RNA sequence: GGGAACGACUCGAGUAGAGUCGAAAAAAAAAGAUAUGGACCAUGCAAUCGAUAUUGUCAGCCUAAUAGCUCGGAAACGAGCUAGGGCUUGGAUUUAUAUCGGUUUACAUGGUCCUAAGUCAAAAAACUAAGAGAAAAUGUUCGCAUUUUCUCUUAGAAAAGAAACAACAACAACAAC
Reactivity to DMS in 0.01 (KOAc 150mM, MgCl2 10mM, bicine 150mM(pH8.5), 24C), signal-to-noise 2, nucleotides 027 to 126: a030a100a070a140a050g040a020u020a300u000g000g000a000c000c000a000u000g020c300a030a010u000c010g000a020u000a000u020u000g000u010c010a060g030c000c020u020a110a180u000a010g020c010u000c010g010g000a110a090a170c010g000a010g000c000u010a030g020g010g010c000u000u020g030g010a030u000u010u000a000u000a040u010c000g010g010u000u000u000a090c000a000u000g000g000u000c000c000u000a010a050g020u000c040a000a040a080a140a150a180